The record gives the reactivity of an RNA of 207 nucleotides to 2A3 and DMS. The 2A3 profile rests on 1,563 reads. 2A3 adducts were read by reverse transcription with SuperScript II with manganese. The data come from the RNA Mapping Database (RMDB), library OK3TST. Conditions: 150 mM KOAc, 10 mM MgCl2 and 150 mM bicine (pH 8.5), 24 C. The DMS profile rests on 2,550 reads.
RNA sequence: GGGAACGACUCGAGUAGAGUCGAAAAAUGCAGCUUAGAGCGGACGCCGGCAUGCGAAAGGAUGGCAGGAGUGGACGCAGUCAUCGCCACGGAUGGGAAAGCAUGCGGAACGUACGGAAACCAUCCUCCGGAUGGGAAAGCAUGCUAGGAUGGGAAAUGACAUCUCAAAGUUCGCUUUGAGAUGUCAAAAAGAAACAACAACAACAAC
Reactivity to 2A3 in 0.01 (KOAc 150mM, MgCl2 10mM, bicine 150mM(pH8.5), 24C), signal-to-noise 2, nucleotides 027 to 156: a000u090g060c020a020g000c020u090u110a030g020a020g100c030g040g040a080c050g010c040c000g060g010c030a060u050g010c040g120a180a000a010g050g010a040u070g030g000c090a060g010g100a070g050u070g030g020a060c040g000c060a000g060u060c000a020u090c040g060c070c010a020c060g100g010a070u130g010g020g000a070a090a060g020c000a010u000g010c010g020g010a060a020c030g030u160a010c050g010g070a030a050a080c030c080a060u020c020c020u050c060c060g060g000a070u090g040g000g000a050a000a000g020c000a000u000g000c000u020a000g000g030a090u070g020g000g030a000a020a040
Reactivity to DMS in 0.01 (KOAc 150mM, MgCl2 10mM, bicine 150mM(pH8.5), 24C), signal-to-noise 1, nucleotides 027 to 156: a090u000g000c030a110g030c030u000u000a080g000a100g060c050g010g000a140c060g020c030c030g000g070c030a040u000g000c070g000a090a040a120g030g020a050u020g010g000c040a110g000g000a060g000u020g000g010a070c050g030c050a130g000u010c080a070u010c120g040c040c020a180c070g000g010a040u000g000g030g000a070a070a080g050c000a050u000g000c010g000g010a080a140c080g010u010a070c020g010g000a060a070a090c030c080a030u000c040c050u010c070c020g040g000a060u010g010g040g000a050a090a190g020c010a020u020g000c000u000a120g030g010a160u000g000g000g010a130a100a130